[RMDB]
RNA sequence: GGGAACGACUCGAGUAGAGUCGAAAAGACGAACGAAAACACAAAUGUUCCACGGUGGAGAAGGGUCCCUCACAUGAGGAUCACCCAUGUAACUCGGACAGGAUAUGCUUUUGGGAAAAAGAGAGAAUCCUGUUAAGGAAUUCGUUCCUUAACAGGAAAAAGAAACAACAACAACAAC
Reactivity to 2A3 in 0.01 (KOAc 150mM, MgCl2 10mM, bicine 150mM(pH8.5), 24C), signal-to-noise 4, nucleotides 027 to 126: g090a020c050g010a110a010c020g030a060a030a060a000c060a010c020a050a130a100u120g020u120u000c010c030a030c070g060g020u070g030g100a150g040a130a080g020g000g010u030c000c020c000u020c010a180c050a180u290g010a010g010g010a030u090c010a020c010c000c010a010u110g030u040a050a010c000u010c060g000g010a010c020a020g000g040a030u030a020u200g010c000u020u020u070u050g050g000g020a040a090a000a030a000g090a020g010a020g050a030a040
Reactivity to DMS in 0.01 (KOAc 150mM, MgCl2 10mM, bicine 150mM(pH8.5), 24C), signal-to-noise 8, nucleotides 027 to 126: g010a100c080g010a090a110c060g010a060a050a050a060c080a050c090a040a140a100u000g010u000u000c010c030a070c130g010g010u000g000g000a140g000a090a100g010g010g010u000c090c000c010u010c020a120c170a110u010g000a020g010g000a040u000c200a030c010c010c000a060u000g000u010a070a080c040u000c070g000g000a040c060a040g010g010a100u000a050u010g000c020u000u000u000u000g010g010g010a040a040a040a070a060g010a090g000a100g010a100a120